RNA sequence: GGGAACGACUCGAGUAGAGUCGAAAACGUUGGCACCGACAUGGGCUACGGCAACCCGGCUUACUCCACUCCGCCGACACUUUGGUGCGUCGGCGGCGUGAGCCGGUCCAGGUAUUACAUGCACCGCGCCGUCUUAGCAUUUCGAUGCUAAGACGGCAAAAGAAACAACAACAACAAC
Reactivity to 2A3 in 0.01 (KOAc 150mM, MgCl2 10mM, bicine 150mM(pH8.5), 24C), signal-to-noise 2, nucleotides 027 to 126: c050g020u030u120g080g000c050a200c300c010g100a190c120a260u180g000g000g000c010u040a010c010g010g000c010a010a070c040c000c000g000g010c050u120u180a100c040u140c080c000a020c010u020c000c000g050c010c000g000a000c020a020c080u230u170u210g220g090u100g080c030g000u010c000g010g010c010g000g000c010g000u000g020a000g000c000c010g000g000u000c000c000a020g110g030u130a130u050u270a130c130a110u160g010c010a010c000c020g080c030
Reactivity to DMS in 0.01 (KOAc 150mM, MgCl2 10mM, bicine 150mM(pH8.5), 24C), signal-to-noise 1, nucleotides 027 to 126: c090g000u000u020g020g020c020a110c030c020g030a190c100a020u000g010g000g020c040u010a030c010g000g000c160a180a160c180c000c020g010g000c000u010u000a000c130u000c110c050a020c090u000c000c000g000c000c010g020a010c010a020c030u000u020u020g000g020u000g030c030g010u010c000g050g000c000g010g030c070g000u020g010a080g020c000c010g020g020u000c020c070a140g000g000u000a070u010u000a060c130a070u020g020c050a050c050c080g000c250